Notes: This 177-nucleotide RNA was probed chemically with DMS and 2A3. For DMS the reverse transcriptase was MarathonRT. Conditions: 150 mM KOAc, 10 mM MgCl2 and 150 mM bicine (pH 8.5), 24 C. The data come from the RNA Mapping Database (RMDB), library OK2TST. For 2A3, 7,382 sequencing reads were counted.
[RMDB]
RNA sequence: GGGAACGACUCGAGUAGAGUCGAAAAUCCUGAGAUGCCUGGGGCCUGCGGUCACAUGUUCAGAGUGUCUGUUCCCAGGAAUCCUGGCACCUGCCAGUGGCCUCAUCCCAGUCUGUCCCAUGGAACAAUACAGAUCAGAUUUCGAUCUGAUCUGUAUAAAAGAAACAACAACAACAAC
Reactivity to DMS in 0.01 (KOAc 150mM, MgCl2 10mM, bicine 150mM(pH8.5), 24C), signal-to-noise 8, nucleotides 027 to 126: u000c010c010u000g000a050g010a040u000g010c300c010u000g000g000g010g020c220c270u000g000c120g010g010u000c010a020c010a080u010g010u010u010c030a040g000a150g010u000g010u000c000u010g010u010u000c010c010c050a120g000g000a080a070u000c090c060u000g010g000c020a040c040c040u000g000c300c040a050g010u000g000g000c010c000u000c030a050u000c010c010c000a030g010u000c060u000g020u010c010c010c010a060u000g010g000a080a110c200a120
Reactivity to 2A3 in 0.01 (KOAc 150mM, MgCl2 10mM, bicine 150mM(pH8.5), 24C), signal-to-noise 3, nucleotides 027 to 126: u010c000c000u020g020a070g000a030u040g020c010c010u000g000g010g010g000c020c070u030g000c020g030g010u010c010a010c040a110u060g030u150u140c020a010g150a030g100u020g010u010c020u050g040u040u020c020c010c010a020g030g090a030a010u060c010c030u010g000g000c000a010c030c010u010g020c010c000a020g010u010g000g000c000c010u000c000a030u000c000c000c000a000g010u010c020u040g050u000c020c000c000a090u160g020g030a060a090c060a100